RNA sequence: GGGAACGACUCGAGUAGAGUCGAAAAAGCAACAAGGUCGAUACUAUGGUGUACUCUCCCAAGAGUCGGGACAUACAGCGAUUAGAGGCAUCCACCUGGAUCGAAAGAGAGUCACGCUAUAGGCCCCGUCCUGCGCUGAAUUCGUUCAGCGCAGGACAAAAGAAACAACAACAACAAC
Reactivity to 2A3 in 0.01 (KOAc 150mM, MgCl2 10mM, bicine 150mM(pH8.5), 24C), signal-to-noise 1, nucleotides 027 to 126: a030g110c080a000a110c070a170a080g070g070u130c020g040a030u020a070c000u000a000u020g030g000u000g000u100a000c000u000c000u010c000c000c000a010a000g130a000g120u130c040g000g000g020a030c000a120u300a160c070a140g060c030g090a070u060u230a070g020a130g170g030c010a040u030c000c000a110c000c000u030g110g000a010u010c000g150a190a000a000g000a060g000a000g000u010c000a000c060g000c000u000a000u000a010g000g150c000c000c000c000
Record summary:
Conditions: 150 mM KOAc, 10 mM MgCl2 and 150 mM bicine (pH 8.5), 24 C. An RNA of 177 nucleotides, treated with 2A3 and read out base by base. The data come from the RNA Mapping Database (RMDB), library OK1LIB.